[RMDB]
Structure probing data (2A3 and DMS) for a 177-nucleotide construct.
For 2A3, 706 sequencing reads were counted.
It was measured as part of the RMDB library RFMREP.
The reactions ran in a buffer of 150 mM KOAc, 10 mM MgCl2 and 150 mM bicine (pH 8.5), at 24 C.
For DMS, 2,101 sequencing reads were counted.
DMS adducts were read by reverse transcription with MarathonRT.
RNA sequence: GGGAACGACUCGAGUAGAGUCGAAAAACUAACAAGGAACGUGAGCUGGGUUUAGACCGUCGUGAGACAGGUUAGUUUUACCCUACUGUUGUCAAUUAUUUACGUAAUAGUAGCAUGAUUUAGUACGGAUUUCUUUCUACUUCGGUAGAAAGAAAUCAAAAGAAACAACAACAACAAC
Reactivity to 2A3 in 0.01 (KOAc 150mM, MgCl2 10mM, bicine 150mM(pH8.5), 24C), signal-to-noise 1, nucleotides 027 to 126: a010c030u050a020a020c040a080a060g070g010a050a000c030g050u050g020a030g000c080u240g030g000g020u230u180u140a120g050a140c010c010g070u030c030g030u060g030a120g010a000c040a040g000g040u000u050a020g010u040u000u000u020a050c000c020c010u050a080c100u080g040u110u080g050u040c030a060a120u070u060a030u060u230u050a030c050g010u030a010a030u050a190g030u050a010g000c020a050u050g070a100u140u030u130a050g040u050a060c050g070
Reactivity to DMS in 0.01 (KOAc 150mM, MgCl2 10mM, bicine 150mM(pH8.5), 24C), signal-to-noise 3, nucleotides 027 to 126: a020c000u000a020a020c020a040a060g020g010a240a120c000g010u000g010a080g000c070u000g010g020g020u010u010u000a140g000a090c000c020g010u000c030g020u000g000a150g010a220c050a040g010g000u000u000a000g010u000u000u010u000a170c020c000c010u000a030c090u010g020u000u000g000u040c040a040a070u000u000a060u000u000u000a100c090g020u000a090a090u000a130g000u010a020g010c270a080u000g010a040u000u010u000a020g010u000a090c210g000
For 2A3 the reverse transcriptase was SuperScript II with manganese.